[RMDB]
RNA sequence: GGGAACGACUCGAGUAGAGUCGAAAAGAUAUGGAGCUCCCAUUCGGUGAAGAUGUGCUACCCACCUCGGAAACGAGAGGCACAUCGAGAAUGGAGCUCCUAAGUCAAACUCUCCUUCGGGAGAGAACAUGACAGACGAGUUCGCUCGUCUGUCAUGAAAAGAAACAACAACAACAAC
Reactivity to DMS in 0.01 (KOAc 150mM, MgCl2 10mM, bicine 150mM(pH8.5), 24C), signal-to-noise 1, nucleotides 027 to 126: g020a040u000a130u000g010g000a040g020c020u010c250c020c050a010u000u000c020g020g010u010g010a080a250g000a000u010g000u000g000c000u000a120c220c100c140a300c210c000u000c000g010g000a050a070a050c010g010a010g010a160g010g000c000a010c000a000u000c010g000a010g000a010a000u000g010g000a040g000c000u000c000c000u000a000a070g010u010c000a060a150a130c000u000c000u000c000c020u000u010c120g000g000g030a010g010a010g000a050a090
Reactivity to 2A3 in 0.01 (KOAc 150mM, MgCl2 10mM, bicine 150mM(pH8.5), 24C), signal-to-noise 1, nucleotides 027 to 126: g020a000u030a030u110g030g000a000g020c020u230c040c230c050a030u000u000c040g300g120u180g080a010a010g000a020u010g000u000g040c010u130a230c070c160c060a300c210c000u010c010g000g000a000a010a010c000g000a000g050a130g020g000c020a020c000a010u000c000g000a020g000a000a020u010g000g000a000g010c000u000c000c000u000a020a000g000u000c010a030a050a190c010u000c000u000c000c030u050u040c300g140g040g000a010g020a010g010a000a000
Annotation: Structure probing data (DMS and 2A3) for a 177-nucleotide construct. Values cover nucleotides 27 to 126.